[RMDB]
RNA sequence: GGGAACGACUCGAGUAGAGUCGAAAAAAUACCCUAGCGCUUAAAGACACUCACCUCCCGCAAAAACAUCCUCGGGUUGGUCUUUUUGAGGGUUUUGAGCGUCGGAUGGAGCAGGGACUGGAGAUGGGGUAUAUAUUACGUUCGCGUAAUAUAUACCAAAAGAAACAACAACAACAAC
Reactivity to DMS in 0.01 (KOAc 150mM, MgCl2 10mM, bicine 150mM(pH8.5), 24C), signal-to-noise 3, nucleotides 027 to 126: a070a050u010a100c020c000c010u000a150g040c030g000c010u000u000a030a230a150g000a020c010a040c020u000c020a060c090c020u000c010c000c000g000c080a010a040a030a040a040c090a040u000c020c030u000c190g030g010g010u010u010g010g000u010c020u000u010u000u000u010g000a030g010g010g010u000u000u000u000g010a030g020c020g030u000c020g000g010a260u000g000g000a050g030c000a080g010g020g010a140c080u000g000g000a110g000a060u000g000g010
Reactivity to 2A3 in 0.01 (KOAc 150mM, MgCl2 10mM, bicine 150mM(pH8.5), 24C), signal-to-noise 2, nucleotides 027 to 126: a000a000u130a040c020c000c000u030a060g000c030g000c000u020u030a050a010a010g030a000c000a000c020u000c000a010c000c000u000c010c000c000g010c000a020a030a030a000a010c010a020u060c010c050u080c060g300g010g000u030u050g020g020u050c050u000u110u020u010u020g020a040g020g000g000u000u020u030u030g010a010g010c000g020u010c010g010g020a050u050g000g000a000g000c000a000g020g010g000a050c060u100g140g020a120g050a120u150g120g050
Chemical mapping of a 177-nucleotide RNA with DMS and 2A3. For DMS the reverse transcriptase was MarathonRT. Values cover nucleotides 27 to 126. The DMS profile rests on 3,374 reads. The 2A3 profile rests on 2,637 reads.